RNA sequence: GGGAACGACUCGAGUAGAGUCGAAAAGCCGGGAACGGGAAGCGUAGCCUGUUUCUACUCUGCUCUUAUCUGGUUCCUCUUAUCUCCUUUGGAAUUUAAGUUGGUCCAGGUAAUGCGCUUAUGUAUGAAUGGGAAAGGGUUUCGACCCUUUCCCAUUAAAAGAAACAACAACAACAAC
Reactivity to 2A3 in 0.01 (KOAc 150mM, MgCl2 10mM, bicine 150mM(pH8.5), 24C), signal-to-noise 5, nucleotides 027 to 126: g080c030c020g010g020g020a020a030c020g000g000g030a040a030g140c030g110u120a030g030c010c010u010g020u000u010u010c000u000a030c020u020c030u070g010c010u010c010u020u000a010u000c000u000g000g000u150u260c000c000u010c000u010u000a010u010c000u050c040c000u180u060u300g040g030a110a080u070u020u030a020a030g040u130u050g030g000u000c000c010a000g000g000u020a030a030u090g010c010g000c010u110u070a120u240g080u020a050u150g130
Reactivity to DMS in 0.01 (KOAc 150mM, MgCl2 10mM, bicine 150mM(pH8.5), 24C), signal-to-noise 2, nucleotides 027 to 126: g040c030c030g000g010g010a070a100c040g020g000g010a100a090g010c160g010u030a120g010c030c020u000g020u000u000u010c000u000a010c020u010c010u000g020c000u000c030u020u000a020u000c000u000g010g010u020u010c030c000u000c000u000u000a000u010c040u000c000c020u020u020u090g000g000a040a080u000u020u000a030a010g030u010u000g000g010u000c000c010a010g000g020u000a020a010u000g010c080g000c020u000u000a060u050g010u000a090u040g010

Structure probing data (2A3 and DMS) for a 177-nucleotide construct. For DMS the reverse transcriptase was MarathonRT. The reactions ran in a buffer of 150 mM KOAc, 10 mM MgCl2 and 150 mM bicine (pH 8.5), at 24 C.